An RNA of 177 nucleotides, treated with 2A3 and DMS and read out base by base. Reactivities are given for positions 27 through 126. Conditions: 150 mM KOAc, 10 mM MgCl2 and 150 mM bicine (pH 8.5), 24 C.
RNA sequence: GGGAACGACUCGAGUAGAGUCGAAAAUUUUGAUUGUUCAUAAAGUGUUACCUUCAUAUUUUGCAAAACCUCUUAUCCAAUUGCGAGUGCAAAGUAGAGUUGGAACAUUCCAUUUAACAAUCAUAAUAUGAUGGAAUAUUUUCGAAUAUUCCAUCAUAAAAGAAACAACAACAACAAC
Reactivity to 2A3 in 0.01 (KOAc 150mM, MgCl2 10mM, bicine 150mM(pH8.5), 24C), signal-to-noise 9, nucleotides 027 to 126: u060u050u010u020g000a000u000u000g010u000u020c070a020u030a050a300a030g010u020g030u030u050a300c000c000u000u010c000a010u010a010u020u010u000u000g000c000a020a040a160a240c050c010u040c030u160u180a140u160c110c090a170a170u140u170g050c050g020a020g030u030g000c000a000a010a000g000u000a010g010a010g040u010u020g010g000a000a000c000a000u020u000c060c010a020u010u010u010a000a000c000a000a000u000c010a000u040a070a030u030
Reactivity to DMS in 0.01 (KOAc 150mM, MgCl2 10mM, bicine 150mM(pH8.5), 24C), signal-to-noise 6, nucleotides 027 to 126: u010u010u010u000g010a000u000u000g000u000u000c130a020u010a070a230a020g020u000g000u000u000a100c000c000u010u000c010a100u000a010u000u000u000u000g000c000a110a060a100a150c270c030u000c050u000u010a070u050c190c210a070a050u010u020g020c240g000a100g010u000g000c000a000a000a010g010u000a010g010a130g010u010u000g010g000a080a020c000a010u000u000c080c100a110u010u000u020a000a010c000a000a020u000c000a020u010a050a100u010